[RMDB]
RNA sequence: GGGAACGACUCGAGUAGAGUCGAAAAGACACGACGGAGACGUCGUGUCAAAGAGUGGGAAACCACUCAAAGAGCCACAGCUUCGGCUGUGGCUCAAGGCGGGGCACCGUCCUCGGAAGAAACGGAAGAUGCUGAUAGGAUUCGUCCUAUCAGCAUCAAAAGAAACAACAACAACAAC
Reactivity to DMS in 0.01 (KOAc 150mM, MgCl2 10mM, bicine 150mM(pH8.5), 24C), signal-to-noise 2, nucleotides 027 to 126: g030a010c010a000c020g020a010c010g010g000a300g000a230c000g030u000c000g000u000g000u000c010a050a100a100g010a020g020u000g010g040g000a160a100a230c000c000a000c000u010c000a030a080a090g000a030g000c000c000a000c000a030g000c010u000u010c270g020g060c000u000g000u000g000g010c000u000c000a030a020g000g000c040g000g000g000g030c020a080c050c000g000u010c000c000u010c000g010g000a010a140g010a020a020a010c000g000g020a100a190
Reactivity to 2A3 in 0.01 (KOAc 150mM, MgCl2 10mM, bicine 150mM(pH8.5), 24C), signal-to-noise 2, nucleotides 027 to 126: g000a000c010a000c000g000a000c000g020g000a060g030a050c010g000u000c000g010u000g000u010c010a000a010a020g000a000g000u020g000g000g000a000a060a100c010c000a000c000u000c010a020a040a000g000a010g000c010c020a000c000a000g010c010u060u100c220g140g030c010u000g000u020g010g000c010u000c000a000a010g000g040c020g010g000g000g010c030a020c100c020g200u300c000c000u030c020g080g200a030a030g030a010a030a010c010g000g040a050a080